[RMDB]
RNA sequence: GGGAACGACUCGAGUAGAGUCGAAAAGAUAUGGAAGUUCCCACGAGCGAUGAAAUCCCUCGGAAACGAGGGAUGGAGCUCCAGUGGGAGACUUCCUAAGUCAAAGGUUGCCACUUCGGUGGCAACCGAUCCGGUAUCACUUCGGUGAUACCGGAUCAAAAGAAACAACAACAACAAC
Reactivity to DMS in 0.01 (KOAc 150mM, MgCl2 10mM, bicine 150mM(pH8.5), 24C), signal-to-noise 1, nucleotides 027 to 126: g020a050u000a300u000g010g000a020a010g000u000u000c000c000c000a010c030g000a010g030c020g000a070u000g020a210a140a030u000c000c000c000u000c010g010g000a070a110a170c010g020a000g000g010g010a000u000g000g020a120g000c000u000c020c300a180g070u000g000g000g050a050g000a020c000u000u000c000c000u000a000a140g000u000c040a090a100a200g000g000u020u000g010c000c000a010c000u000u000c220g000g050u010g010g010c000a020a010c000c000

An RNA of 177 nucleotides, treated with DMS and read out base by base. Source: RMDB library TTRDES, as collected in RNAgym. The reactions ran in a buffer of 150 mM KOAc, 10 mM MgCl2 and 150 mM bicine (pH 8.5), at 24 C. For DMS the reverse transcriptase was MarathonRT.